The data come from the RNA Mapping Database (RMDB), library RFMREP. Structure probing data (2A3 and DMS) for a 177-nucleotide construct. 2A3 adducts were read by reverse transcription with SuperScript II with manganese. For 2A3, 7,105 sequencing reads were counted. For DMS the reverse transcriptase was MarathonRT. The RNA was probed in 150 mM KOAc, 10 mM MgCl2 and 150 mM bicine (pH 8.5) at 24 C.
[RMDB]
RNA sequence: GGGAACGACUCGAGUAGAGUCGAAAAUGCUCUGAACUACCACUUAGUUCUUGGACAGCAGGAUUAGCGAUGUGUAAUGACAACAUCAAAGUUUGGCCCAUGCUUCUUUAACCUGUGUAUCAUGGCACAGAAGAUGAAAGUUCGCUUUCAUCUUCUGAAAAGAAACAACAACAACAAC
Reactivity to 2A3 in 0.01 (KOAc 150mM, MgCl2 10mM, bicine 150mM(pH8.5), 24C), signal-to-noise 5, nucleotides 027 to 126: u050g010c010u010c040u090g020a030a010c010u030a040c040c120a110c100u060u070a010g010u020u010c000u020u070g050g020a040c030a030g000c010a010g020g060a120u050u080a020g060c030g040a020u020g060u030g020u070a090a190u180g130a050c020a050a020c000a090u050c010a030a050a050g050u050u080u070g060g000c000c000c010a020u050g000c020u050u080c010u090u110u020a060a060c010c010u030g000u000g010u040a040u120c060a070u090g050g000c020a000
Reactivity to DMS in 0.01 (KOAc 150mM, MgCl2 10mM, bicine 150mM(pH8.5), 24C), signal-to-noise 7, nucleotides 027 to 126: u010g010c020u010c060u000g010a050a050c030u000a070c200c140a090c150u010u000a050g020u000u000c010u000u000g010g010a070c120a090g010c040a040g020g000a120u000u000a040g010c210g000a040u010g020u000g000u010a100a110u010g010a080c100a080a050c020a040u000c030a080a110a090g010u000u000u000g020g010c020c010c020a100u010g000c070u000u000c040u000u000u000a080a090c050c020u000g010u010g010u000a080u000c050a050u000g010g000c130a180